[RMDB]
RNA sequence: GGGAACGACUCGAGUAGAGUCGAAAAGAAAAUCCCCGGGACCCCGCGCACCCGACAGAGCCCGUUGACCCUUGCUGCCUUCCAGCCCUGGGGGAGUUCACAGGAUAGACGCCGCGCGGGGUAAAAACAUCAUAAAAUGUUUCGACAUUUUAUGAUGAAAAGAAACAACAACAACAAC
Reactivity to DMS in 0.01 (KOAc 150mM, MgCl2 10mM, bicine 150mM(pH8.5), 24C), signal-to-noise 1, nucleotides 027 to 126: g020a160a150a100a130u000c000c010c000c020g000g000g020a120c030c020c010c010g010c030g020c010a200c090c040c030g000a040c070a060g010a130g000c040c110c040g000u000u000g000a110c180c040c000u000u000g010c020u010g000c300c000u000u000c080c030a100g010c030c050c030u000g000g000g000g000g000a080g000u010u010c020a060c070a060g000g010a130u000a090g000a030c020g000c130c080g020c000g010c000g020g000g000g010u000a000a010a040a100a040

Notes:
The record gives the reactivity of an RNA of 177 nucleotides to DMS. Values cover nucleotides 27 to 126. It was measured as part of the RMDB library M2PK90.